[RMDB]
Source information: Structure probing data (DMS and 2A3) for a 177-nucleotide construct. 2A3 adducts were read by reverse transcription with SuperScript II with manganese. The RNA was probed in 150 mM KOAc, 10 mM MgCl2 and 150 mM bicine (pH 8.5) at 24 C.
RNA sequence: GGGAACGACUCGAGUAGAGUCGAAAAUUAUAGGAGGACCUGGUGCAGUAUUUUGGAUGUGGAUUACUGCGUUUUUAGGUGCAAGUAGUGCUUUUAUUGAAUCUACACUUGGUCAAAUAUUCAAGAGAUACGAAAAGGAUUUCGAUCCUUUUCGUAUAAAAGAAACAACAACAACAAC
Reactivity to DMS in 0.01 (KOAc 150mM, MgCl2 10mM, bicine 150mM(pH8.5), 24C), signal-to-noise 5, nucleotides 027 to 126: u030u040a080u030a120g020g010a260g010g000a050c030c020u010g000g000u010g020c030a020g000u020a010u000u010u020u010g010g000a030u010g020u000g010g000a050u020u010a000c010u000g010c010g010u000u000u010u030u040a100g020g000u000g020c020a020a070g000u000a020g010u000g000c040u010u010u020u020a050u030u000g010a010a030u000c020u000a050c050a060c020u000u000g000g010u000c050a030a120a100u020a070u020u010c100a050a080g030a110g000
Reactivity to 2A3 in 0.01 (KOAc 150mM, MgCl2 10mM, bicine 150mM(pH8.5), 24C), signal-to-noise 7, nucleotides 027 to 126: u110u050a070u100a140g080g050a030g040g070a010c000c010u020g000g020u020g000c000a010g020u180a060u050u060u060u110g140g040a080u080g040u060g070g040a010u010u020a030c010u020g020c010g020u050u000u020u090u140a130g040g000u040g020c020a070a050g010u040a010g020u070g120c030u090u090u060u090a090u090u100g040a010a020u020c010u010a020c010a000c020u010u020g000g000u030c020a020a100a080u180a080u100u070c030a030a030g030a010g010

Reactivities are given for positions 27 through 126. DMS adducts were read by reverse transcription with MarathonRT.